[RMDB]
RNA sequence: GGGAACGACUCGAGUAGAGUCGAAAAGGAGGUGGUCAUGGCCAUCAAUGUCAACAAUCGUGAAGCGGAUGCGCUGACACGCAAAUUCGCGCAUAUGGCCGGCGUCAGUAUCUCCGAUGCCAUUGUCGGCAUAAAUGCAGUUCGCUGCAUUUAUGCCAAAAGAAACAACAACAACAAC
Reactivity to 2A3 in 0.01 (KOAc 150mM, MgCl2 10mM, bicine 150mM(pH8.5), 24C), signal-to-noise 7, nucleotides 027 to 126: g030g000a020g010g020u070g020g020u060c030a070u170g030g000c000c000a010u030c090a050a030u050g040u090c020a050a050c030a170a210u180c100g060u060g110a080a000g010c010g050g010a110u180g100c010g020c050u080g070a040c000a020c090g020c010a090a080a040u050u050c010g000c000g000c050a020u030a010u200g000g000c000c000g000g020c020g070u120c050a030g090u100a040u020c020u000c000c010g000a070u100g060c020c020a040u040u110g170u150c100
Reactivity to DMS in 0.01 (KOAc 150mM, MgCl2 10mM, bicine 150mM(pH8.5), 24C), signal-to-noise 4, nucleotides 027 to 126: g010g000a030g000g030u010g000g000u050c040a280u030g040g000c030c000a000u000c170a110a050u000g000u010c070a060a300c300a030a060u010c060g000u030g000a300a050g020c050g000g010a140u020g000c210g000c000u030g030a060c120a100c140g000c250a020a130a110u000u000c040g000c220g000c020a030u010a010u000g000g000c000c010g000g000c120g000u050c090a090g020u060a040u010c000u020c010c000g000a110u020g000c020c010a150u030u020g010u050c060
Annotation
An RNA of 177 nucleotides, treated with 2A3 and DMS and read out base by base. Conditions: 150 mM KOAc, 10 mM MgCl2 and 150 mM bicine (pH 8.5), 24 C. DMS adducts were read by reverse transcription with MarathonRT. Values are in units of 0.01, from 0 to 300, in steps of 10.